Conditions: 150 mM KOAc, 10 mM MgCl2 and 150 mM bicine (pH 8.5), 24 C. Structure probing data (2A3 and DMS) for a 207-nucleotide construct. For 2A3, 2,588 sequencing reads were counted. The DMS profile rests on 3,751 reads. DMS (dimethyl sulfate) methylates the pairing face of unpaired adenines and cytosines. For 2A3 the reverse transcriptase was SuperScript II with manganese. Source: RMDB library OK3TST, as collected in RNAgym. As a SHAPE reagent, 2A3 marks flexible, mostly unpaired nucleotides at the ribose 2'-OH.

RNA sequence: GGGAACGACUCGAGUAGAGUCGAAAAUGCCUGCUGACACUGAGAUGGGUGGGCUUCAGGGCUCAUGUUCCGCCGAGGGCAUCAGGAGGCACUCGAGGUGUGAAUGGUUUGAUUAGGCUGAGGUGGAAUCUGAAGACAGAAAAUAAAGCGGAGCUGAGGUCAAAAUAGUAUUCGUACUAUUUUGACCAAAAGAAACAACAACAACAAC
Reactivity to 2A3 in 0.01 (KOAc 150mM, MgCl2 10mM, bicine 150mM(pH8.5), 24C), signal-to-noise 3, nucleotides 027 to 156: u060g020c010c000u030g070c030u040g020a030c020a030c090u070g040a040g030a120u090g030g020g040u030g010g010g020c000u080u070c100a130g080g010g000c010u000c040a030u060g050u090u050c000c020g000c010c020g020a080g030g020g000c030a030u010c000a020g070g010a030g010g020c010a010c010u030c060g080a050g020g000u050g000u030g060a060a040u070g020g050u040u090u080g090a100u040u070a050g090g000c040u010g010a020g040g020u030g010g040a030a040u040c050u060g010a040a000g050a070c040a020g100a050a080a000a010u180a020a110a000g020c050g010g000a000g020c020u010g020a010
Reactivity to DMS in 0.01 (KOAc 150mM, MgCl2 10mM, bicine 150mM(pH8.5), 24C), signal-to-noise 1, nucleotides 027 to 156: u000g010c020c010u010g030c030u010g010a190c050a100c030u020g030a190g000a100u000g020g010g030u000g010g020g000c020u010u000c130a180g020g000g020c010u000c020a050u000g020u010u000c020c040g100c000c030g000a290g000g000g020c040a040u000c020a050g020g000a140g020g000c030a040c030u000c020g010a090g010g030u010g000u000g000a050a130u010g000g020u000u000u000g010a110u000u000a060g000g020c050u010g000a140g020g010u010g030g010a050a080u000c030u000g010a000a100g010a180c020a080g000a030a040a090a130u000a020a060a090g030c040g000g000a070g010c050u000g000a190